[RMDB]
An RNA of 177 nucleotides, treated with 2A3 and DMS and read out base by base. Conditions: 150 mM KOAc, 10 mM MgCl2 and 150 mM bicine (pH 8.5), 24 C. It was measured as part of the RMDB library OK2TRN.
RNA sequence: GGGAACGACUCGAGUAGAGUCGAAAAUGUCUGCAUUGGUGUUCUGGCUAUCGGCCUCAAUUACUUUAUCACCAACAGAGAGCGUGAUAGCAGCAACAAGUAUGAGCGCUUGAACUGGCUCAAUGAACUACUUCGCAGAUUUCGAUCUGCGAAGUAGAAAAGAAACAACAACAACAAC
Reactivity to 2A3 in 0.01 (KOAc 150mM, MgCl2 10mM, bicine 150mM(pH8.5), 24C), signal-to-noise 1, nucleotides 027 to 126: u100g030u030c010u120g000c070a100u030u100g040g000u030g040u000u160c040u000g050g020c020u030a100u130c090g020g020c010c000u050c000a090a120u190u090a030c020u000u200u150a070u130c040a030c100c050a000a040c100a040g130a000g000a010g020c090g000u040g000a070u000a040g040c080a010g000c020a020a020c040a070a000g040u060a070u270g010a010g010c090g000c040u000u080g040a090a060c030u060g060g010c010u020c020a000a040u110g010a060a080
Reactivity to DMS in 0.01 (KOAc 150mM, MgCl2 10mM, bicine 150mM(pH8.5), 24C), signal-to-noise 1, nucleotides 027 to 126: u000g000u000c070u000g050c050a090u010u000g000g000u000g000u000u000c070u000g000g010c010u000a080u010c070g010g000c000c000u000c080a020a140u010u000a050c180u000u000u000a080u000c110a060c120c090a130a160c170a170g010a090g000a090g000c040g050u000g010a000u010a060g030c090a040g010c110a040a150c080a030a030g000u000a090u000g000a060g000c140g010c030u000u000g000a060a080c170u010g020g010c040u000c020a020a080u000g000a090a170